[RMDB]
RNA sequence: GGGAACGACUCGAGUAGAGUCGAAAAUUUCAAACAAGUGUUCCAGAUAUUUACGCGAUUGGCGAUGCGACUAAAGUUCGGUUUACGCCCACGGGUACUAAAGAGCGGAUCACUUUAGGCAGCGCGGCCAGUCAUGCCGGUCGGUUAUUAGCGCAUAAACAACCUAGGAUUUCGAUCCUAGGUUGUUAAAAGAAACAACAACAACAAC
Reactivity to 2A3 in 0.01 (KOAc 150mM, MgCl2 10mM, bicine 150mM(pH8.5), 24C), signal-to-noise 1, nucleotides 027 to 156: u010u010u000c030a020a000a000c030a060a030g110u010g010u090u020c000c000a080g050a010u070a190u110u180u090a160c070g010c020g080a080u000u000g010g000c020g100a200u100g040c000g000a010c000u090a180a000a000g080u090u250c160g030g000u040u000u040a010c030g000c000c000c000a010c030g150g000g000u060a020c100u090a090a070a000g030a000g130c060g000g000a000u090c030a030c060u050u060u080a070g040g000c040a030g050c010g010c010g040g000c000c010a000g030u020c010a000u100g000c010c020g010g080u000c010g010g000u110u050a100u010u130a130g060c000g000c060a030u150a090
Reactivity to DMS in 0.01 (KOAc 150mM, MgCl2 10mM, bicine 150mM(pH8.5), 24C), signal-to-noise 1, nucleotides 027 to 156: u010u020u000c040a120a110a170c100a040a090g020u000g040u000u000c010c010a240g020a100u000a050u000u010u000a080c050g040c020g000a070u030u000g020g030c020g030a130u000g000c050g040a230c050u000a060a020a090g020u010u000c070g000g010u000u010u000a090c020g010c000c000c040a050c120g000g000g000u000a170c070u000a090a060a050g000a000g030c000g010g060a090u000c030a050c030u000u010u000a040g000g000c070a140g000c050g020c060g030g030c030c030a060g030u010c060a070u000g020c050c000g000g050u010c050g010g050u010u000a070u000u000a090g030c020g000c020a030u010a120
Conditions: 150 mM KOAc, 10 mM MgCl2 and 150 mM bicine (pH 8.5), 24 C. This 207-nucleotide RNA was probed chemically with 2A3 and DMS. For 2A3, 499 sequencing reads were counted. For DMS the reverse transcriptase was MarathonRT. 2A3 adducts were read by reverse transcription with SuperScript II with manganese. The DMS profile rests on 1,739 reads.